[RMDB]
RNA sequence: GGGAACGACUCGAGUAGAGUCGAAAAAGGAUGGGGCAUGCGAAAGGAUGGUGACUAGAGGCCGUUAAUCCUCAAUGGAUGGGAAAGCAUGCCACAUUGGCCUUGUGGUGGAUGGGAAAGCAUGCCUUAUGUAGCCUCUCUGCAUGCGAAAGGAUGGGAGUAGUACGUAAUUCGUUACGUACUACUCAAAAGAAACAACAACAACAAC
Reactivity to 2A3 in 0.01 (KOAc 150mM, MgCl2 10mM, bicine 150mM(pH8.5), 24C), signal-to-noise 6, nucleotides 027 to 156: a000g120g000a020u080g010g020g010g010c020a020u020g000c030g120a140a040a040g090g000a050u070g000g040u070g030a060c050u070a030g010a030g040g020c010c000g020u020u060a020a050u050c010c000u050c040a080a170u200g040g020a030u050g000g030g030a060a050a020g020c030a020u050g000c010c000a020c000a010u020u030g040g010c000c020u040u050g040u040g040g050u050g010g020a090u030g010g000g060a050a090a000g000c000a000u050g000c000c000u060u040a120u080g100u090a020g010c010c000u010c000u000c010u040g010c030a030u050g020c010g070a090a050a010g050g050a040u120g070g020
Reactivity to DMS in 0.01 (KOAc 150mM, MgCl2 10mM, bicine 150mM(pH8.5), 24C), signal-to-noise 3, nucleotides 027 to 156: a100g010g000a080u000g010g020g020g070c050a020u010g010c020g020a110a090a090g020g020a090u020g010g020u000g010a080c060u010a120g020a110g020g020c020c070g010u000u010a100a130u010c000c010u000c140a090a130u010g010g000a080u000g020g010g000a050a060a100g010c030a030u000g020c020c020a000c020a040u000u010g040g000c030c070u000u000g030u010g020g030u000g010g020a100u010g000g000g020a090a060a160g010c030a030u010g000c000c040u000u010a070u000g030u000a090g000c040c020u010c010u000c040u010g000c020a040u010g020c050g010a150a080a060g040g010a080u000g010g000
Source: RMDB library OK3TST, as collected in RNAgym. The record gives the reactivity of an RNA of 207 nucleotides to 2A3 and DMS. DMS adducts were read by reverse transcription with MarathonRT. Reactivities are given for positions 27 through 156.